[RMDB]
RNA sequence: GGGAACGACUCGAGUAGAGUCGAAAACAAGAAGAGGGACAAGAAUCUGACCUGCACCUCCUCGUGGUGUCCCUCGGACACGUGCUCAACGCGCGGCCGACGCAGGCAGACAAGACGAAGACGUCAACAUACUCGUAUUAUUCGUAAUACGAGUAUGAAAAGAAACAACAACAACAAC
Reactivity to 2A3 in 0.01 (KOAc 150mM, MgCl2 10mM, bicine 150mM(pH8.5), 24C), signal-to-noise 1, nucleotides 027 to 126: c120a030a050g080a110a010g000a090g000g020g010a010c020a050a050g070a160a130u110c000u040g030a150c010c000u010g000c000a000c010c010u060c010c030u090c010g000u150g040g000u050g020u000c000c010c000u000c020g000g010a000c070a000c070g020u010g000c010u030c100a170a130c110g000c020g010c000g020g020c020c000g000a000c050g010c000a010g000g030c020a000g020a020c050a020a040g000a000c020g090a080a050g080a050c040g030u010c020a000a010
Chemical mapping of a 177-nucleotide RNA with 2A3. The reactions ran in a buffer of 150 mM KOAc, 10 mM MgCl2 and 150 mM bicine (pH 8.5), at 24 C.